[RMDB]
RNA sequence: GGGAACGACUCGAGUAGAGUCGAAAAAGAAAUAAUGGCACAUGUUUUAAACAUGUGAUCGGAACGAAUGGUUUCUAAAUAAAACCAUGAAAGCAAUUGGAGGGCAAGUCUGGUGCCAGCAGCCGCGCUGCUCUAAAAUAUUCGUAUUUUAGAGCAGAAAAGAAACAACAACAACAAC
Reactivity to 2A3 in 0.01 (KOAc 150mM, MgCl2 10mM, bicine 150mM(pH8.5), 24C), signal-to-noise 9, nucleotides 027 to 126: a000g100a010a050a020u190a060a070u110g040g010c000a000c000a000u000g080u000u100u080u230a160a240a000c000a010u000g000u000g020a050u070c020g030g020a070a040c040g050a070a030u010g010g020u000u030u010c080u110a080a080a070u180a020a040a010a000c000c000a000u040g060a080a070a010g020c040a020a100u080u100g070g000a070g030g020g000c020a040a040g050u020c040u080g050g010u040g040c010c000a010g010c020a010g010c020c020g040c010g000
Reactivity to DMS in 0.01 (KOAc 150mM, MgCl2 10mM, bicine 150mM(pH8.5), 24C), signal-to-noise 9, nucleotides 027 to 126: a070g010a090a090a080u030a090a100u040g010g000c000a010c000a010u000g000u000u010u040u040a070a080a050c010a010u000g000u000g010a050u010c020g010g010a120a090c140g010a140a020u000g000g010u000u000u000c050u020a080a090a120u040a150a010a020a010c000c000a010u000g010a090a080a110g000c090a060a080u020u010g010g010a080g010g000g010c050a060a070g000u010c040u010g000g010u010g010c030c030a050g000c050a080g000c040c040g010c140g010
Description:
This 177-nucleotide RNA was probed chemically with 2A3 and DMS. The data come from the RNA Mapping Database (RMDB), libraries RFM100 and RFMREP. Reactivities are given for positions 27 through 126. DMS adducts were read by reverse transcription with MarathonRT. The RNA was probed in 150 mM KOAc, 10 mM MgCl2 and 150 mM bicine (pH 8.5) at 24 C.